[RMDB]
RNA sequence: GGGAACGACUCGAGUAGAGUCGAAAACGAACUGGCAAUAAGGACGGUGGGGAGUGCCUUGGUCGACCUGCGUAAUUCCCGCCGAAACAGGGUUUUCACCCUUCCUUUCUUGGGGUGUCCUUCCCCGGAUAAUCCUAGAGUUCGCUCUAGGAUUAUCAAAAGAAACAACAACAACAAC
Reactivity to DMS in 0.01 (KOAc 150mM, MgCl2 10mM, bicine 150mM(pH8.5), 24C), signal-to-noise 4, nucleotides 027 to 126: c070g000a100a100c050u000g000g010c080a090a080u000a050a020g010g010a070c010g000g030u000g020g010g010g010a030g030u000g010c010c020u000u000g010g010u010c180g010a120c030c010u000g000c150g020u000a040a080u000u010c000c000c000g020c040c020g000a030a070a060c110a040g010g000g010u000u000u000u010c100a090c010c010c010u000u000c030c030u010u000u000c050u000u000g010g010g010g000u010g010u000c020c040u000u000c000c000c000c160g020
Reactivity to 2A3 in 0.01 (KOAc 150mM, MgCl2 10mM, bicine 150mM(pH8.5), 24C), signal-to-noise 4, nucleotides 027 to 126: c020g050a050a040c050u060g130g000c080a050a190u090a200a020g010g020a010c010g010g010u050g010g020g000g010a010g020u030g010c010c020u060u080g070g020u150c090g100a300c020c010u060g000c060g030u010a020a020u030u010c000c000c010g000c020c000g010a030a020a020c080a010g040g030g020u040u050u130u200c070a040c000c000c000u000u050c030c010u030u090u080c040u020u130g010g010g000g000u050g050u030c000c020u040u080c000c000c000c000g010
Conditions: 150 mM KOAc, 10 mM MgCl2 and 150 mM bicine (pH 8.5), 24 C. The record gives the reactivity of an RNA of 177 nucleotides to DMS and 2A3. High DMS reactivity at an A or C suggests that its Watson-Crick edge is free. For 2A3, 6,764 sequencing reads were counted. 2A3 adducts were read by reverse transcription with SuperScript II with manganese. Reactivities are given for positions 27 through 126.